[RMDB]
RNA sequence: GGGAACGACUCGAGUAGAGUCGAAAAUCACGUGUGGAAUGUCAACUAUGCUGGUAUAGGACACGGCGUAUGUAAGCAUAGAUAGACUACAUACGCAGUAGUCAGUAGUCUAUCUAAUCUGACUGCAGAUAGUAAGCUGAUUCGUCGGUUUACUAUCAAAAGAAACAACAACAACAAC
Reactivity to 2A3 in 0.01 (KOAc 150mM, MgCl2 10mM, bicine 150mM(pH8.5), 24C), signal-to-noise 9, nucleotides 027 to 126: u110c020a040c080g040u060g010u040g060g130a120a080u100g030u050c010a030a030c050u060a040u140g030c030u050g040g060u100a080u070a130g110g040a020c030a010c070g040g000c020g030u040a040u130g060u050a060a050g020c030a030u020a040g020a020u060a020g020a020c010u000a000c000a050u100a030c050g000c110a040g040u090a020g020u030c040a010g000u010a000g010u000c020u040a050u010c010u010a030a090u030c030u040g050a050c010u030g000c010a020
Reactivity to DMS in 0.01 (KOAc 150mM, MgCl2 10mM, bicine 150mM(pH8.5), 24C), signal-to-noise 9, nucleotides 027 to 126: u020c050a110c080g010u000g020u010g010g010a090a050u020g000u010c020a070a080c060u010a040u020g010c050u010g000g020u010a060u010a070g010g010a120c050a040c030g000g000c040g020u000a010u020g000u000a060a070g010c120a120u000a020g000a060u010a040g000a030c020u000a010c000a110u020a040c120g010c110a130g010u030a050g010u020c100a070g010u000a010g010u000c050u010a020u010c010u000a030a040u020c040u000g000a040c020u000g000c070a150